Structure probing data (2A3 and DMS) for a 177-nucleotide construct. 2A3 adducts were read by reverse transcription with SuperScript II with manganese. DMS adducts were read by reverse transcription with MarathonRT. It was measured as part of the RMDB library OK2TRN.
[RMDB]
RNA sequence: GGGAACGACUCGAGUAGAGUCGAAAACGCCGGAGCCGUCGGUCGCGGCGAUCUCGAGUUCGCACGCGUCCGCGAGUCGCUUGAGGCGCUGGCGGAGCAGCCCACGCCCAUCGUCGGUGAGGACGUACCCGUACCAUGAAUUCGUUCAUGGUACGGGAAAAGAAACAACAACAACAAC
Reactivity to 2A3 in 0.01 (KOAc 150mM, MgCl2 10mM, bicine 150mM(pH8.5), 24C), signal-to-noise 3, nucleotides 027 to 126: c000g000c030c010g000g050a030g040c020c020g070u110c020g000g000u020c030g010c030g020g000c000g010a050u030c080u040c120g230a290g070u050u050c020g000c040a250c060g000c050g070u010c000c000g020c010g010a020g080u120c030g020c160u080u200g100a080g090g000c000g020c030u010g030g000c020g020g000a030g020c050a020g000c000c000c000a010c010g020c020c010c010a110u070c020g070u020c050g000g090u160g070a070g060g020a040c000g000u030a100
Reactivity to DMS in 0.01 (KOAc 150mM, MgCl2 10mM, bicine 150mM(pH8.5), 24C), signal-to-noise 3, nucleotides 027 to 126: c060g020c010c020g010g010a140g020c010c010g000u000c020g000g020u000c050g020c030g010g000c000g000a020u000c020u010c150g000a130g020u000u000c010g020c030a120c080g020c000g020u000c000c030g000c110g010a050g000u010c040g030c050u000u010g000a170g020g010c020g010c040u000g000g010c000g010g010a140g020c100a160g000c010c000c020a150c110g000c000c010c020a100u000c010g020u000c100g010g010u000g010a170g010g000a040c030g010u000a140